Chemical mapping of a 177-nucleotide RNA with 2A3 and DMS. For 2A3 the reverse transcriptase was SuperScript II with manganese. For 2A3, 1,077 sequencing reads were counted. The data come from the RNA Mapping Database (RMDB), library OK2TRN. For DMS the reverse transcriptase was MarathonRT.

RNA sequence: GGGAACGACUCGAGUAGAGUCGAAAAUUUGACCAUCUCAGUUUUGAUUUCAGACCAUCCGAUGAGGGUAAUGAAAUGGGUCUCAAGAAAGCCAAGCAGAAGACUCCUGUCCAGCGCGCAGGACAAGGAGCUAAUCCCAAUUCGUUGGGAUUAGCUCAAAAGAAACAACAACAACAAC
Reactivity to 2A3 in 0.01 (KOAc 150mM, MgCl2 10mM, bicine 150mM(pH8.5), 24C), signal-to-noise 2, nucleotides 027 to 126: u080u050u150g080a040c010c010a050u040c000u000c040a050g020u000u000u070u200g060a060u000u080u060c030a000g000a040c000c040a060u040c010c050g070a130u150g040a100g080g030g010u090a070a160u040g060a050a030a000u070g030g000g070u030c020u010c030a110a110g050a140a040a040g000c050c010a040a050g000c040a030g030a160a010g070a240c020u020c040c050u020g010u000c030c010a100g010c020g010c000g070c110a030g020g000a010c010a020a040g100
Reactivity to DMS in 0.01 (KOAc 150mM, MgCl2 10mM, bicine 150mM(pH8.5), 24C), signal-to-noise 2, nucleotides 027 to 126: u000u010u010g000a100c070c060a150u000c070u000c060a050g010u000u010u000u020g010a130u000u000u000c030a060g010a120c160c050a040u010c000c180g010a130u020g000a160g020g000g020u000a030a120u020g010a040a040a060u000g000g000g030u000c040u000c100a060a050g030a070a110a110g000c020c070a080a040g040c090a050g010a060a060g000a050c040u000c020c020u000g000u000c000c020a050g020c100g000c130g010c010a080g000g020a030c130a080a100g010